[RMDB]
RNA sequence: GGGAACGACUCGAGUAGAGUCGAAAACGCUGGGUCGUCAACAGCAGUCAUCGAUCUGCUGAAGCGCGCACGGCAGGGAGACUGCGUUGAGCGACCUGUGCUGAAGCGCGCACGGCAACCGAAAGGUGCGAAACUUCACCCCGUUCGCGGGGUGAAGCAGAUUAUCUCCGUUCGCGGAGAUAAUCUGAAAAGAAACAACAACAACAAC
Reactivity to DMS in 0.01 (KOAc 150mM, MgCl2 10mM, bicine 150mM(pH8.5), 24C), signal-to-noise 1, nucleotides 027 to 156: c040g050c020u000g040g020g030u000c000g020u000c020a050a020c000a200g000c010a020g020u000c000a300u000c180g000a030u000c000u020g000c000u020g010a030a040g020c010g080c000g000c000a300c040g010g010c000a040g000g020g010a080g000a040c030u010g020c050g000u010u000g000a180g000c040g020a040c010c010u020g000u000g040c000u020g010a000a040g020c000g010c000g040c010a300c040g000g010c010a130a130c000c030g000a120a060a220g000g010u010g000c040g020a080a040a180c010u000u000c000a010c000c000c010c000g010u000u000c230g000c060g040g020g000g060u000g040a020a000g000
Reactivity to 2A3 in 0.01 (KOAc 150mM, MgCl2 10mM, bicine 150mM(pH8.5), 24C), signal-to-noise 3, nucleotides 027 to 156: c060g010c050u130g020g000g000u000c010g030u030c020a010a010c030a070g030c000a000g000u010c000a120u300c030g010a010u010c000u030g000c000u010g050a130a050g020c010g010c000g000c010a020c030g000g010c000a000g010g010g000a030g000a000c010u000g010c030g040u030u050g020a040g060c030g000a010c010c010u010g000u010g000c010u030g010a140a040g000c010g000c000g000c010a000c010g020g000c020a040a020c010c040g050a080a040a020g040g000u030g030c030g050a110a050a020c000u020u000c000a000c010c000c000c000g010u040u040c230g030c010g110g000g010g000u000g000a000a000g000

This 207-nucleotide RNA was probed chemically with DMS and 2A3. The RNA was probed in 150 mM KOAc, 10 mM MgCl2 and 150 mM bicine (pH 8.5) at 24 C. The data come from the RNA Mapping Database (RMDB), library RNAMAK. The 2A3 profile rests on 5,506 reads.